Structure probing data (DMS and 2A3) for a 207-nucleotide construct.
The DMS profile rests on 5,902 reads.
Values cover nucleotides 27 to 156.
The data come from the RNA Mapping Database (RMDB), library M2RFPK.
DMS adducts were read by reverse transcription with MarathonRT.

RNA sequence: GGGAACGACUCGAGUAGAGUCGAAAAUCAUUGAGAUGCUGGGCGCUAUGGUCGUCCUCCUCCGGCUGACCUCCUUCUCAGCUGCUGACCGGCGCCGCACAGGCGGCAUCUCAGCUACGUGUGCAAAAAAAGAAUGGUCGGUUCGCCGACCAUUCAAGUAUUCUAUCUAGUUCGCUAGAUAGAAUACAAAAGAAACAACAACAACAAC
Reactivity to DMS in 0.01 (KOAc 150mM, MgCl2 10mM, bicine 150mM(pH8.5), 24C), signal-to-noise 2, nucleotides 027 to 156: u010c050a080u000u000g000a020g000a020u000g020c020u010g000g000g010c010g030c050u000a040u020g020g010u000c020g010u000c040c020u000c030c010u000c030c010g010g020c010u000g000a050c120c100u000c120c110u000u000c100u010c010a040g010c000u000g040c070u000g010a020c030c010g000g000c030g030c030c030g050c070a100c120a100g010g030c050g000g000c010a020u000c010u000c040a040g010c050u010a070c080g000u000g000u000g000c030a000a000a080a110a090a150a210g000a040a020u000g010g010u000c000g020g020u000u000c300g020c020c000g000a030c000c010a000u010u000c000a020a180
Reactivity to 2A3 in 0.01 (KOAc 150mM, MgCl2 10mM, bicine 150mM(pH8.5), 24C), signal-to-noise 2, nucleotides 027 to 156: u170c050a040u040u050g000a020g010a010u010g010c000u020g080g010g000c000g010c010u090a190u300g050g020u020c030g040u080c020c000u040c000c000u070c020c000g000g000c030u000g000a060c010c090u120c030c000u270u080c030u000c020a010g010c010u030g020c080u110g020a000c010c000g000g000c000g000c010c010g000c020a050c010a000g200g020c000g010g000c010a010u000c010u000c000a010g020c010u090a040c090g110u080g030u070g120c090a150a030a010a000a000a000a000g010a000a000u000g000g020u000c010g000g030u050u070c190g040c070c000g000a000c000c000a000u000u000c010a010a010
Conditions: 150 mM KOAc, 10 mM MgCl2 and 150 mM bicine (pH 8.5), 24 C.